[RMDB]
RNA sequence: GGGAACGACUCGAGUAGAGUCGAAAAGAUAUGGAUGAGGUGGGACAACAGCUAUCCUUCGGAAACGAAGGGAUAGACAUGUCCGCCUCAUCCUAAGUCAAAAGUGACAUGCUUCGGCAUGUCACAAGCUCCAAAGUAUGUUCGCAUACUUUGGAGCAAAAGAAACAACAACAACAAC
Reactivity to DMS in 0.01 (KOAc 150mM, MgCl2 10mM, bicine 150mM(pH8.5), 24C), signal-to-noise 3, nucleotides 027 to 126: g000a000u000a040u030g000g000a020u000g000a000g010g050u000g020g060g010a020c000a160a060c240a270g010c000u000a000u000c010c000u000u000c000g020g000a020a000a020c000g010a000a000g010g010g000a030u000a000g000a010c080a300u020g000u000c000c000g010c000c000u000c010a000u000c000c000u020a010a050g000u000c010a090a120a090a120g010u000g010a000c000a060u000g000c010u000u020c270g030g000c020a000u000g000u020c000a000c020a020a080
Reactivity to 2A3 in 0.01 (KOAc 150mM, MgCl2 10mM, bicine 150mM(pH8.5), 24C), signal-to-noise 4, nucleotides 027 to 126: g010a010u020a000u020g010g000a010u010g010a000g060g070u300g180g130g040a020c060a300a010c030a300g000c000u000a000u010c000c000u000u000c000g020g000a000a000a000c000g000a000a020g110g010g000a020u010a000g000a000c030a230u300g010u010c000c010g000c000c000u000c000a000u010c000c000u000a000a000g000u000c010a010a060a040a110g000u000g010a000c000a000u000g000c010u070u070c230g180g000c000a000u020g010u010c000a000c000a000a000